This 207-nucleotide RNA was probed chemically with DMS and 2A3. The data come from the RNA Mapping Database (RMDB), library OK3TST. For DMS, 3,217 sequencing reads were counted. The 2A3 profile rests on 909 reads. The RNA was probed in 150 mM KOAc, 10 mM MgCl2 and 150 mM bicine (pH 8.5) at 24 C. In probing experiments dimethyl sulfate is read out at A N1 and C N3, which are open when not base-paired.
RNA sequence: GGGAACGACUCGAGUAGAGUCGAAAACUGGCCUCCAGCAUGGGAGAGAACCCGCUUCCAUUUUUUCAAGCCCCACAGCUGUGGUCCAUUAUGGCAGCCACAGGACACUGAUGCACCUCCCACCUGGCCGCUGUGGAUGGACGACCCCGCCCGCAGGCAAAUUCGGAAUUUUCGAAUUCCGAAUUUGAAAAGAAACAACAACAACAAC
Reactivity to DMS in 0.01 (KOAc 150mM, MgCl2 10mM, bicine 150mM(pH8.5), 24C), signal-to-noise 2, nucleotides 027 to 156: c080u010g020g000c020c010u000c020c010a120g030c080a100u010g020g000g020a060g010a120g000a070a110c040c040c000g010c040u010u000c020c030a100u000u020u000u000u010u000c060a120a160g000c030c030c000c010a060c050a110g050c040u010g020u010g010g030u000c000c030a200u010u000a060u010g050g020c040a140g000c020c010a020c010a080g010g000a090c050a130c030u010g000a140u000g020c010a080c150c020u000c010c000c000a060c070c040u000g030g030c040c040g000c020u000g030u010g020g050a060u000g000g010a120c020g010a150c020c020c000c020g000c020c010c040g010c050a100g010g030
Reactivity to 2A3 in 0.01 (KOAc 150mM, MgCl2 10mM, bicine 150mM(pH8.5), 24C), signal-to-noise 2, nucleotides 027 to 156: c050u030g050g010c010c040u030c030c020a040g060c050a110u060g000g020g010a040g010a020g050a080a090c020c030c070g060c040u070u000c050c020a220u080u080u040u040u050u120c070a090a040g010c000c020c020c000a030c020a020g010c000u030g010u030g050g010u030c040c030a030u190u200a090u240g050g000c080a020g010c000c000a020c020a020g000g030a010c070a020c160u100g050a080u120g020c060a020c010c010u030c010c020c010a010c000c030u000g020g040c010c030g030c010u020g000u040g060g000a080u070g020g000a030c020g020a040c030c000c000c000g000c040c020c030g000c000a010g070g010